[RMDB]
RNA sequence: GGGAACGACUCGAGUAGAGUCGAAAACAGUAACGAAAAUCCUGGUCAUAGUAGCAGCGUUAGUCGGGUUAGACCCCCGACGGCCGAACGAGUAAGGGUUCCUCAGCAAUGCUGAUCAGCUGAGGGUCUCAAUCCAUACCUUCGGGUAUGGAUUGAGAAAAGAAACAACAACAACAAC
Reactivity to 2A3 in 0.01 (KOAc 150mM, MgCl2 10mM, bicine 150mM(pH8.5), 24C), signal-to-noise 3, nucleotides 027 to 126: c040a060g090u150a080a030c070g020a090a070a000a070u030c020c000u010g030g050u090c050a040u000a120g080u100a040g030c080a040g000c070g120u110u190a030g000u040c020g000g010g000u030u030a020g020a070c010c000c000c000c000g010a010c010g000g010c010c020g060a070a040c070g040a090g080u100a000a100g000g000g030u040u070c000c000u000c000a010g000c040a000a070u290g080c070u150g020a090u120c040a000g030c010u010g010a040g010g000g000u040
Reactivity to DMS in 0.01 (KOAc 150mM, MgCl2 10mM, bicine 150mM(pH8.5), 24C), signal-to-noise 2, nucleotides 027 to 126: c050a110g000u030a090a070c130g020a110a060a100a020u040c000c010u000g030g010u000c060a090u060a100g000u050a060g020c070a070g000c000g010u030u000a070g010u000c010g020g030g000u000u000a100g000a110c260c300c000c000c000g000a000c000g000g020c030c030g010a120a080c150g030a080g000u040a140a040g030g000g000u000u000c000c000u010c010a010g010c010a100a080u040g010c000u040g000a040u010c020a150g000c010u010g010a010g000g000g000u020

Chemical mapping of a 177-nucleotide RNA with 2A3 and DMS.
Source: RMDB library RFM100, as collected in RNAgym.
2A3 adducts were read by reverse transcription with SuperScript II with manganese.
The DMS profile rests on 2,310 reads.